[RMDB]
Conditions: 150 mM KOAc, 10 mM MgCl2 and 150 mM bicine (pH 8.5), 24 C. The record gives the reactivity of an RNA of 207 nucleotides to DMS and 2A3. For 2A3 the reverse transcriptase was SuperScript II with manganese. It was measured as part of the RMDB library RNAMAK. For DMS the reverse transcriptase was MarathonRT. Values cover nucleotides 27 to 156.
RNA sequence: GGGAACGACUCGAGUAGAGUCGAAAAGCGUACUACAUGGAGGCAUGAUGGAGGCUAGAUCGUAAAAGCUCCCAAAUAGGAGCUGAUGAAGGUCUAGCCUAUGAAGUCAUGCUCCCCACCCAUGUAUCGCAAAGCUUUAAAGUUCGCUUUAAAGCAAUCUGAAUAUCCACUUCGGUGGAUAUUCAGAAAAAGAAACAACAACAACAAC
Reactivity to DMS in 0.01 (KOAc 150mM, MgCl2 10mM, bicine 150mM(pH8.5), 24C), signal-to-noise 1, nucleotides 027 to 156: g000c000g010u010a020c080u000a070c150a110u000g010g000a230g080g020c000a020u000g010a030u020g010g010a030g010g040c040u000a000g000a020u000c040g090u000a130a290a300a080g000c020u010c010c010c010a010a120a290u000a020g020g010a020g000c000u010g030a000u000g030a160a280g010g050u000c010u000a030g020c000c000u000a000u000g000a110a300g010u000c000a020u000g010c040u050c050c000c030c000a120c080c000c010a080u000g000u000a030u000c010g010c000a050a180a160g000c010u010u010u000a000a030a020g010u030u000c300g010c020u000u000u010a000a010a010g000c000a080a050
Reactivity to 2A3 in 0.01 (KOAc 150mM, MgCl2 10mM, bicine 150mM(pH8.5), 24C), signal-to-noise 2, nucleotides 027 to 156: g010c020g020u080a080c030u000a000c030a010u000g010g000a010g040g000c000a000u000g000a010u030g000g040a000g000g010c000u020a000g000a010u000c010g000u000a030a020a000a000g010c010u060c020c020c040a180a300a030u250a140g010g010a010g030c000u010g010a060u300g000a010a000g040g000u010c000u000a000g010c030c010u000a000u000g000a000a010g000u000c000a000u010g000c000u040c000c000c000c000a020c000c000c000a000u020g000u010a030u300c030g000c040a060a100a050g000c010u010u020u030a000a000a010g010u060u150c300g060c080u000u010u000a000a000a000g000c000a000a080